[RMDB]
RNA sequence: GGGAACGACUCGAGUAGAGUCGAAAACUCCCAUUCGUGGGAGCUUGAGACCUUUGUGUACCGAGAUCCGAACUACCCACUAUGGACCCAUUGGGUCCAAUAAUGUGGGCGGAUCGUUUGACGUACACUCUGGUAAGAAAUGCCGUUCGCGGCAUAAGUCUAUACAGAAAUUCGUUUCUGUAUAGACAAAAGAAACAACAACAACAAC
Reactivity to 2A3 in 0.01 (KOAc 150mM, MgCl2 10mM, bicine 150mM(pH8.5), 24C), signal-to-noise 6, nucleotides 027 to 156: c000u000c000c000c000a010u060u110c270g070u040g000g000g000a020g030c040u120u180g140a080g030a040c000c000u010u020u020g000u010g000u000a000c010c030g030a020g000a050u020c000c010g020a050a030c060u110a090c180c000c000a000c000u030a050u080g000g000a000c000c010c100a220u100u300g020g000g000u020c020c020a000a010u160a020a010u130g000u010g000g010g000c020g000g000a010u000c010g010u030u060u100g020a010c010g010u000a000c000a000c000u000c000u000g010g030u010a030a020g100a040a190a010u030g000c020c020g020u070u110c280g000c010g140g000c000a020u080a050a000
Reactivity to DMS in 0.01 (KOAc 150mM, MgCl2 10mM, bicine 150mM(pH8.5), 24C), signal-to-noise 3, nucleotides 027 to 156: c000u010c000c000c010a080u000u000c230g020u000g010g000g010a000g050c020u020u000g000a250g000a070c010c000u000u000u000g020u000g040u010a040c010c010g010a300g000a000u000c050c030g010a050a100c040u000a240c000c000c000a030c050u000a140u010g020g010a040c000c000c010a300u000u000g040g040g020u000c000c010a000a020u000a050a120u000g020u000g010g010g000c010g020g030a020u000c020g010u010u010u000g020a270c180g000u000a010c010a000c020u000c040u000g030g000u000a090a150g000a110a100a050u010g040c000c020g030u000u000c260g030c020g000g020c020a010u000a020a180

Overview:
This 207-nucleotide RNA was probed chemically with 2A3 and DMS. It was measured as part of the RMDB library RNAMAK. 2A3 adducts were read by reverse transcription with SuperScript II with manganese. The DMS profile rests on 7,103 reads. The RNA was probed in 150 mM KOAc, 10 mM MgCl2 and 150 mM bicine (pH 8.5) at 24 C.